[RMDB]
RNA sequence: GGGAACGACUCGAGUAGAGUCGAAAAUCGAACCACGUGUUUUUUCAGAUACACAAGAUAUUGCUGAUGAGCUUAAAAACCGCCGUGCGACACUUGUCAAUUUACAACGUAUUGAUAAAGUAUCAGCAUCUUACUUCAGGUUCGCCUGAAGUAAGAUAAAAGAAACAACAACAACAAC
Reactivity to 2A3 in 0.01 (KOAc 150mM, MgCl2 10mM, bicine 150mM(pH8.5), 24C), signal-to-noise 4, nucleotides 027 to 126: u080c020g000a010a030c030c010a060c120g030u040g040u010u010u020u020u130u120c080a060g030a150u100a090c030a010c000a050a000g050a070u170a040u100u130g010c030u000g000a060u030g030a080g020c000u100u100a110a140a000a000a020c010c030g040c030c040g060u030g020c030g030a010c010a010c060u050u020g000u030c010a000a040u050u110u170a140c100a180a060c120g080u130a020u020u020g030a020u080a200a090a000g000u020a030u050c010a010g010c000
Reactivity to DMS in 0.01 (KOAc 150mM, MgCl2 10mM, bicine 150mM(pH8.5), 24C), signal-to-noise 4, nucleotides 027 to 126: u000c130g000a110a230c090c040a100c140g010u000g000u000u000u010u020u010u010c150a070g010a100u000a040c060a070c060a080a110g000a090u010a070u010u000g020c020u000g010a060u010g010a100g000c070u000u020a040a040a050a070a060c080c030g000c050c060g020u010g000c040g010a050c060a010c010u000u000g030u000c020a010a010u010u010u010a080c160a050a080c200g000u010a020u000u010g000a030u000a030a020a040g020u000a040u000c030a120g010c090